RNA sequence: GGGAACGACUCGAGUAGAGUCGAAAAUGAAGAAAAUAUCAAAGCACGAAUAGCGAUUCGAGGUAAAGGAGUAAUGGUAGUUGCUCCACUAGAAAUAUUAGAUCCAUUUAAAGGUAUUUUAAAAUUUCAAUUACCUAAUGAUGUAAUUAAACGAGAACAUAUUUACGGGUUUCGACCCGUAAAUAUGAAAAGAAACAACAACAACAAC
Reactivity to DMS in 0.01 (KOAc 150mM, MgCl2 10mM, bicine 150mM(pH8.5), 24C), signal-to-noise 1, nucleotides 027 to 156: u030g000a030a150g010a130a090a110a180u000a110u000c080a070a120a130g020c030a070c040g040a040a070u000a070g090c060g000a300u000u000c000g030a090g000g030u000a060a130a100g000g020a060g050u000a050a070u010g080g020u000a140g010u020u000g000c020u010c000c050a080c060u030a180g010a080a090a070u000a010u030u000a080g000a070u000c030c030a120u000u030u030a040a110a100g010g000u000a000u000u000u010u000a010a070a060a060u000u000u010c050a060a030u000u010a020c000c020u000a050a080u000g000a060u000g000u010a050a050u000u000a000a060a060c090g000a140g000a060a250
Reactivity to 2A3 in 0.01 (KOAc 150mM, MgCl2 10mM, bicine 150mM(pH8.5), 24C), signal-to-noise 2, nucleotides 027 to 156: u100g000a060a090g000a010a050a070a010u230a020u110c070a060a030a000g000c000a000c090g010a030a020u060a090g070c030g050a040u050u060c020g010a070g100g010u110a090a000a050g010g010a000g000u010a020a060u090g070g080u050a030g040u020u000g000c010u000c000c000a000c010u080a060g020a050a050a020u080a040u060u040a000g030a040u010c060c000a000u040u070u130a140a130a000g000g000u060a080u010u050u030u130a100a140a060a110u110u200u020c000a020a010u030u020a010c000c000u010a050a060u110g030a000u060g020u100a070a050u040u090a100a010a020c100g010a060g020a090a020